An RNA of 207 nucleotides, treated with DMS and 2A3 and read out base by base.
Source: RMDB library M2RFOK, as collected in RNAgym.
The DMS profile rests on 4,463 reads.
For 2A3 the reverse transcriptase was SuperScript II with manganese.
Values are in units of 0.01, from 0 to 300, in steps of 10.
Conditions: 150 mM KOAc, 10 mM MgCl2 and 150 mM bicine (pH 8.5), 24 C.
DMS adducts were read by reverse transcription with MarathonRT.
[RMDB]
RNA sequence: GGGAACGACUCGAGUAGAGUCGAAAAAAAGUUGCAUGAUCGUAAAACAUGCCCGGCUUACCGUGAGCCGCCUUUGAAAGAAAGGUUUACACGGACUCUGUUGCGUUACGCACGUACCUAACUUGUGAAAACGGCAUCUUGUUCGCAAGAUGCCGAAUCAAUCCCUUAAGUUCGCUUAAGGGAUUGAAAAAGAAACAACAACAACAAC
Reactivity to DMS in 0.01 (KOAc 150mM, MgCl2 10mM, bicine 150mM(pH8.5), 24C), signal-to-noise 2, nucleotides 027 to 156: a050a060a080g010u000u010g010c000a020u000g000a130u000c090g000u000a100a070a050a050c020a030u010g050c020c020c010g010g010c010u010u000a060c040c100g000u020g010a080g000c000c020g000c010c000u000u000u010g000a160a070a220g000a070a030a020g030g020u010u000u000a160c050a040c010g020g020a130c140u000c080u010g000u010u000g000c000g010u000u000a060c060g020c050a050c100g020u020a070c040c040u000a050a090c090u000u030g000u000g000a080a080a060a120c020g020g010c020a010u000c010u010u000g010u000u010c300g000c000a040a020g010a010u000g000c000c000g000a010a030
Reactivity to 2A3 in 0.01 (KOAc 150mM, MgCl2 10mM, bicine 150mM(pH8.5), 24C), signal-to-noise 4, nucleotides 027 to 156: a000a000a010g030u020u010g000c000a000u010g040a110u230c070g080u190a080a080a020a030c000a010u000g010c000c000c000g000g000c000u010u110a070c000c000g000u000g000a010g000c000c000g020c030c000u030u000u020g090a140a060a000g030a010a020a000g020g000u010u050u040a020c010a000c010g000g050a060c020u080c060u170g090u110u020g000c010g040u070u070a070c160g020c010a010c010g020u050a050c010c030u070a120a150c080u120u120g040u050g190a020a060a020a050c010g000g010c010a000u010c000u010u020g030u060u060c190g010c100a000a000g000a000u000g000c000c000g000a000a000